This 177-nucleotide RNA was probed chemically with 2A3 and DMS.
Values are in units of 0.01, from 0 to 300, in steps of 10.
Source: RMDB libraries RFM100 and RFMREP, as collected in RNAgym.
For 2A3, 1,258 sequencing reads were counted.
For DMS the reverse transcriptase was MarathonRT.
Reactivities are given for positions 27 through 126.
The RNA was probed in 150 mM KOAc, 10 mM MgCl2 and 150 mM bicine (pH 8.5) at 24 C.
[RMDB]
RNA sequence: GGGAACGACUCGAGUAGAGUCGAAAAAGAGAAGUUUCUCUGAUCGUGUAGAGCACCGAAAACCACGAGGAGGAGGCGCAGUGUUCUCUCCUGAGCGUGAAGCCGGCUCUUGGUGUCGCUUUGCUGCAUGAGGGUAGUACUUCGGUACUACCCUCAUAAAAGAAACAACAACAACAAC
Reactivity to 2A3 in 0.01 (KOAc 150mM, MgCl2 10mM, bicine 150mM(pH8.5), 24C), signal-to-noise 2, nucleotides 027 to 126: a000g080a000g000a110a090g080u020u140u000c000u000c000u020g030a080u040c020g010u010g010u060a030g020a010g040c020a060c050c020g120a080a040a030a050c040c000a010c030g010a010g020g070a040g000g040a010g000g040c040g000c060a050g030u060g050u220u020c030u000c000u010c010c020u030g020a010g020c010g000u060g070a020a010g040c040c000g000g000c000u000c020u030u100g080g000u030g020u010c020g000c010u050u060u060g010c010u070g040c010
Reactivity to DMS in 0.01 (KOAc 150mM, MgCl2 10mM, bicine 150mM(pH8.5), 24C), signal-to-noise 3, nucleotides 027 to 126: a020g000a050g000a030a130g010u010u000u000c010u010c000u010g010a190u000c020g020u000g020u040a070g010a100g020c070a120c090c080g000a040a050a110a140c130c010a040c030g000a030g000g010a080g000g000a080g000g000c050g010c080a070g020u040g000u010u020c020u010c080u010c030c020u000g010a030g020c020g030u020g000a120a140g000c050c040g020g030c010u000c040u030u000g010g000u010g010u010c080g010c070u000u010u020g000c020u000g000c080